[RMDB]
RNA sequence: GGGAACGACUCGAGUAGAGUCGAAAACAGGGGCGAUGGAAGCGGAACGGGAAACCGCAACGUGAGGUCCAGCGAAUCCAGGCGCACGUCCGUCGCUUGGCCCUCGAACACGGGCGGGACGAGGCUGUCUCCACCGGUGGUUCGCCACCGGUGGAGAAAAAGAAACAACAACAACAAC
Reactivity to DMS in 0.01 (KOAc 150mM, MgCl2 10mM, bicine 150mM(pH8.5), 24C), signal-to-noise 2, nucleotides 027 to 126: c090a110g040g000g000g060c160g000a100u050g000g000a070a110g010c030g020g000a070a170c030g000g000g080a110a060a090c000c010g020c070a040a180c040g030u060g000a030g000g000u000c010c100a060g000c000g000a000a100u040c250c030a090g000g010c000g040c150a070c120g010u000c080c060g000u000c000g000c000u000u000g000g000c000c000c000u000c010g080a040a060c180a040c030g020g000g050c110g000g010g050a090c060g060a170g030g000c070u000g020
Reactivity to 2A3 in 0.01 (KOAc 150mM, MgCl2 10mM, bicine 150mM(pH8.5), 24C), signal-to-noise 2, nucleotides 027 to 126: c080a020g030g040g000g000c070g070a080u090g050g040a040a040g000c010g030g020a050a100c040g130g020g000a040a080a080c000c000g030c070a050a120c020g010u060g000a050g060g020u000c000c000a000g020c050g020a040a060u110c120c060a100g030g050c050g000c050a080c150g070u030c010c000g030u020c000g000c000u040u100g000g010c060c010c000u030c040g130a120a040c040a000c050g000g000g040c010g030g000g020a010c040g000a050g020g000c060u070g050